Chemical mapping of a 207-nucleotide RNA with DMS and 2A3. The RNA was probed in 150 mM KOAc, 10 mM MgCl2 and 150 mM bicine (pH 8.5) at 24 C. The DMS profile rests on 8,221 reads. DMS adducts were read by reverse transcription with MarathonRT. Source: RMDB library OK3TST, as collected in RNAgym.

[RMDB]
RNA sequence: GGGAACGACUCGAGUAGAGUCGAAAACCACAACCCGUGGUUCACUGAAGAACUGAAGCAGCACAUGAACCAGAUGAAGGCUGUGGAUUAUGAUCGCUAUCUGUGGGUGUAUGAAGGGUUAUUCAACAAGCGUUCCGAAGAGGCCGUGCUUGGCGGGAUUCAUUAGUACGUUCGCGUACUAAUGAAUAAAAGAAACAACAACAACAAC
Reactivity to DMS in 0.01 (KOAc 150mM, MgCl2 10mM, bicine 150mM(pH8.5), 24C), signal-to-noise 3, nucleotides 027 to 156: c010c020a060c010a080a080c030c010c000g010u010g020g020u000u000c020a090c030u000g020a150a090g010a080a140c060u000g010a170a200g010c010a050g000c040a140c070a110u000g010a020a040c010c010a120g000a150u010g020a080a070g000g010c010u010g010u010g020g020a160u000u000a050u010g010a090u000c080g020c050u000a070u000c040u000g020u000g000g020g010u010g010u000a070u000g000a080a120g000g010g010u010u000a090u010u020c050a030a070c080a040a050g000c020g040u000u000c040c010g010a080a110g010a180g010g070c070c050g020u000g010c030u000u000g010g000c070g010g010g020
Reactivity to 2A3 in 0.01 (KOAc 150mM, MgCl2 10mM, bicine 150mM(pH8.5), 24C), signal-to-noise 7, nucleotides 027 to 156: c010c010a020c020a010a070c000c030c010g070u040g020g000u040u040c030a050c090u140g080a100a080g030a200a040c050u120g030a080a020g050c020a000g010c030a040c010a100u100g040a070a050c040c010a040g040a130u110g060a130a020g070g010c030u000g020u050g050g000a010u040u110a070u200g090a050u090c050g000c090u050a040u130c030u040g020u070g030g020g000u040g010u030a090u120g070a050a050g030g000g020u040u050a060u100u130c070a070a060c020a080a050g040c020g060u070u040c020c010g030a090a050g030a060g090g000c030c020g010u040g020c030u030u040g010g000c020g010g000g040